This 177-nucleotide RNA was probed chemically with DMS and 2A3.
It was measured as part of the RMDB library TTRDES.
For DMS, 2,254 sequencing reads were counted.
DMS adducts were read by reverse transcription with MarathonRT.
[RMDB]
RNA sequence: GGGAACGACUCGAGUAGAGUCGAAAAGAUAUGGAGGUGGGUAGGGAGCUCGUAUUCGGAAACGAAUACUGAGCGAGGAUCUAUUACCUCCUAAGUCAAAACAGGCCAUCCUUCGGGAUGGCCUGAAGAAUACUUGCAUGUUCGCAUGCAAGUAUUCAAAAGAAACAACAACAACAAC
Reactivity to DMS in 0.01 (KOAc 150mM, MgCl2 10mM, bicine 150mM(pH8.5), 24C), signal-to-noise 1, nucleotides 027 to 126: g010a020u000a050u010g020g000a000g000g010u000g040g000g000u000a010g000g010g000a020g030c010u000c000g020u000a000u010u000c010g000g010a000a010a050c000g010a010a010u000a010c020u020g060a000g010c000g010a050g020g000a040u000c000u000a030u000u010a000c000c010u000c000c020u000a020a060g010u000c010a090a100a170a300c000a030g020g000c020c000a000u000c000c000u000u030c300g040g000g020a000u010g010g000c010c000u010g000a010a070
Reactivity to 2A3 in 0.01 (KOAc 150mM, MgCl2 10mM, bicine 150mM(pH8.5), 24C), signal-to-noise 1, nucleotides 027 to 126: g000a000u010a000u030g000g000a000g000g000u070g030g150g000u080a020g030g000g000a010g000c000u000c020g040u000a000u000u010c000g010g000a010a010a000c010g000a000a030u010a000c070u160g010a000g020c020g000a140g010g020a020u020c000u000a030u030u070a020c000c020u010c000c010u000a000a000g000u000c000a000a000a110a150c030a010g040g000c050c010a000u010c000c050u120u260c300g120g000g000a000u010g030g000c000c000u010g010a000a010